Conditions: 150 mM KOAc, 10 mM MgCl2 and 150 mM bicine (pH 8.5), 24 C. An RNA of 207 nucleotides, treated with DMS and 2A3 and read out base by base. The 2A3 profile rests on 629 reads. For DMS the reverse transcriptase was MarathonRT.
RNA sequence: GGGAACGACUCGAGUAGAGUCGAAAAACUGCUUGGUGUGACCCAGAUGGAAAUGCUCCAGAACCUGGCCCCUCAAUAACAGCCUGUAAAUGCUUGUUUACCCUGUUUUCUCACAUCAGCCUUUUAGGUGGGGUUAUUUGCACUAUCCUUUAACAGCUACUCGGACUAUAUUCGUAUAGUCCGAGUAAAAAGAAACAACAACAACAAC
Reactivity to DMS in 0.01 (KOAc 150mM, MgCl2 10mM, bicine 150mM(pH8.5), 24C), signal-to-noise 1, nucleotides 027 to 156: a050c060u010g030c020u000u000g010g000u010g040u000g030a110c070c000c030a200g140a110u000g020g000a080a120a080u000g000c060u000c040c020a090g000a060a120c040c020u010g030g040c000c010c020c030u000c050a090a060u010a130a050c080a070g000c020c060u030g000u000a020a090a100u010g010c060u000u010g020u010u000u000a080c020c040c000u010g020u010u000u010u010c070u000c010a100c050a060u000c060a080g000c000c020u000u000u010u000a030g040g050u010g020g000g030g000u000u000a020u000u000u010g000c000a080c050u010a150u000c010c000u000u000u000a120a110c070a130g000c090
Reactivity to 2A3 in 0.01 (KOAc 150mM, MgCl2 10mM, bicine 150mM(pH8.5), 24C), signal-to-noise 2, nucleotides 027 to 156: a000c060u030g000c040u070u090g020g000u020g040u040g020a050c000c000c000a020g080a090u030g000g040a040a150a060u140g000c050u040c040c020a090g020a250a200c060c000u020g010g000c000c000c000c000u040c010a000a030u080a080a010c000a010g010c000c070u010g020u070a000a040a070u120g010c010u080u140g080u080u040u040a040c030c000c010u010g090u000u060u040u020c020u010c000a000c000a050u040c040a010g000c000c000u050u170u150u150a020g000g040u040g010g020g030g000u000u060a090u040u100u080g020c010a000c040u030a060u100c000c000u070u120u130a130a050c050a020g200c000